[RMDB]
RNA sequence: GGGAACGACUCGAGUAGAGUCGAAAAGAAUCGUCGUGGUGCCGUAGGGAAGCCGCGAAGCGGGCCACUUGGGAAGUACGGCCGCAAGGCUGAAACUUAAAGGAAUUGGCGGGGGAGCACCACAACGUACUCAGCACUUCUUCGGAAGUGCUGAGUAAAAAGAAACAACAACAACAAC
Reactivity to 2A3 in 0.01 (KOAc 150mM, MgCl2 10mM, bicine 150mM(pH8.5), 24C), signal-to-noise 1, nucleotides 027 to 126: g190a000a030u150c040g030u000c000g010u000g010g000u000g000c020c050g000u070a060g000g090g000a180a010g050c000c000g050c010g150a000a050g010c000g000g000g000c100c070a040c110u130u140g010g000g030a030a030g000u060a050c020g020g000c010c000g010c020a010a010g000g000c040u090g000a120a020a100c020u070u030a090a030a170g080g000a060a110u150u100g060g000c070g040g020g030g000g000a030g020c000a000c020c010a000c010a000a030c020g000
Reactivity to DMS in 0.01 (KOAc 150mM, MgCl2 10mM, bicine 150mM(pH8.5), 24C), signal-to-noise 1, nucleotides 027 to 126: g000a080a070u000c050g000u010c090g030u000g000g010u000g010c000c020g020u050a270g000g010g000a040a160g000c000c000g000c080g000a080a090g000c080g030g030g010c000c080a080c020u000u050g080g000g000a120a000g010u000a110c120g000g000c000c000g040c230a140a110g000g040c010u000g000a080a130a110c060u000u000a190a100a120g000g000a060a130u030u020g020g000c040g000g000g000g000g000a190g000c050a000c070c000a040c000a000a050c060g040
Chemical mapping of a 177-nucleotide RNA with 2A3 and DMS. The reactions ran in a buffer of 150 mM KOAc, 10 mM MgCl2 and 150 mM bicine (pH 8.5), at 24 C.